RNA sequence: GGGAACGACUCGAGUAGAGUCGAAAAUACAUAGUGGAAACACCAGGGCCACAUUACUUAGGUAUCAACAUGAACGACGUGGAACUAGCUUAUUAAAUUGGCAAAACAUAGACACCAAGAAAUAGAAGUAUAAUCUGUCUUUCGAGACAGAUUAUACAAAAGAAACAACAACAACAAC
Reactivity to DMS in 0.01 (KOAc 150mM, MgCl2 10mM, bicine 150mM(pH8.5), 24C), signal-to-noise 3, nucleotides 027 to 126: u020a090c110a050u000a070g010u000g000g010a100a080a090c050a080c040c050a050g000g010g000c010c040a030c050a050u000u000a030c070u000u000a040g010g020u000a030u000c070a070a030c110a030u010g020a070a090c120g000a040c070g000u000g010g010a030a090c090u000a070g000c050u000u010a080u000u000a040a060a140u000u010g000g000c070a020a050a080a070c090a060u000a050g000a060c090a060c030c030a010a050g010a070a040a070u000a100g000a110a120
Reactivity to 2A3 in 0.01 (KOAc 150mM, MgCl2 10mM, bicine 150mM(pH8.5), 24C), signal-to-noise 3, nucleotides 027 to 126: u090a000c050a000u100a030g060u030g030g020a030a080a020c030a020c030c010a020g010g050g010c010c010a020c010a070u080u070a040c040u040u070a030g000g020u040a020u080c020a010a080c000a070u080g070a080a040c070g110a020c050g070u040g010g010a040a020c000u000a040g040c000u080u040a040u070u160a190a090a090u060u030g020g000c040a000a030a050a100c040a040u050a040g050a010c010a010c010c020a030a010g100a090a080a020u160a050g080a180a020
Conditions: 150 mM KOAc, 10 mM MgCl2 and 150 mM bicine (pH 8.5), 24 C. Structure probing data (DMS and 2A3) for a 177-nucleotide construct. The DMS profile rests on 2,379 reads. DMS adducts were read by reverse transcription with MarathonRT.